[RMDB]
RNA sequence: GGGAACGACUCGAGUAGAGUCGAAAAAUAAAUCCUCACCAAGAUUUAAAUUAAGCAAGAGAUAUAAGGCCGCUCCUUAUAUUGCGACUUGCUUAAACUUGUGACUGAAUAAUCAACGAUUUAACAACCUUUUUGUUGACUUCGGUCAACAAAAAGGAAAAGAAACAACAACAACAAC
Reactivity to 2A3 in 0.01 (KOAc 150mM, MgCl2 10mM, bicine 150mM(pH8.5), 24C), signal-to-noise 2, nucleotides 027 to 126: a000u060a010a120a000u050c010c020u020c000a030c000c000a020a010g020a000u090u240u230a050a090a080u020u070a000a000g000c000a030a000g000a000g020a030u000a000u000a000a000g000g000c080c010g030c110u130c020c000u020u000a000u000a000u000u090g070c010g030a010c000u000u000g010c000u000u000a000a000a000c000u010u010g020u020g120a020c060u120g130a060a120u160a050a080u100c010a010a060c060g030a050u030u090u280a030a140c200a000a050